[RMDB]
An RNA of 177 nucleotides, treated with DMS and read out base by base. It was measured as part of the RMDB library OK2TST. Conditions: 150 mM KOAc, 10 mM MgCl2 and 150 mM bicine (pH 8.5), 24 C.

RNA sequence: GGGAACGACUCGAGUAGAGUCGAAAAGGUGAGGCCAACGUGAUGAAGGCUCUGCAGCACGAGCGGCUGGUCCGACUCUACGCAGUGGUCACCAAGGAGCCCAUCUACAUUGUCACCGAGUACAUGGUGUGCAACGGCCUUUCGAGGCCGUUGCACAAAAAGAAACAACAACAACAAC
Reactivity to DMS in 0.01 (KOAc 150mM, MgCl2 10mM, bicine 150mM(pH8.5), 24C), signal-to-noise 1, nucleotides 027 to 126: g030g040u000g010a060g010g010c020c000a030a280c090g010u000g020a030u000g000a050a120g030g020c010u000c030u000g000c010a110g030c010a120c150g000a040g020c160g020g010c040u000g040g070u000c050c000g000a060c010u000c010u000a010c030g040c060a010g040u030g020g020u000c080a030c010c040a010a060g020g000a120g010c030c020c010a120u000c080u030a060c130a160u000u000g000u010c030a100c030c020g000a170g000u010a090c130a130u020g000g000